[RMDB]
RNA sequence: GGGAACGACUCGAGUAGAGUCGAAAAGAAGGUCCAAGAGAACUUUCAAGAAGGAGGAUUUUUCCCCAAGACGCUGGUGGACUCUUGGAAUGGGAAAGAGGAGGGCGGAAAAAGAGGAGCGGGCCUCGUAUCCAUGACUUCGGUCAUGGAAAAAGAAACAACAACAACAAC
Reactivity to DMS in 0.01 (KOAc 150mM, MgCl2 10mM, bicine 150mM(pH8.5), 24C), signal-to-noise 8, nucleotides 027 to 129: g030a030a050g000g000u030c010c070a030a150g020a060g020a050a070c050u020u050u050c130a100a020g020a090a040g020g000a070g040g010a070u020u030u010u020u020c020c010c020c090a140a070g020a080c190g020c090u000g040g020u000g020g020a100c020u020c020u020u050g000g030a040a050u050g000g040g000a050a030a030g020a010g060g020a080g060g030g000c180g040g000a020a040a030a070a050g010a050g020g010a090g000c040g030g010g070c030c050u020c060g020u010a000
Reactivity to 2A3 in 0.01 (KOAc 150mM, MgCl2 10mM, bicine 150mM(pH8.5), 24C), signal-to-noise 6, nucleotides 027 to 129: g030a010a000g050g000u010c010c010a020a010g020a000g010a070a040c010u030u110u100c090a040a030g040a050a050g070g030a020g030g020a050u120u020u020u070u060c010c000c000c010a030a020g050a020c080g020c100u070g020g030u060g020g010a020c000u010c000u040u070g010g040a040a030u070g040g000g000a030a080a040g040a020g030g000a030g030g030g000c050g010g010a060a090a000a020a000g040a020g020g010a020g000c040g000g000g010c000c000u040c010g020u040a070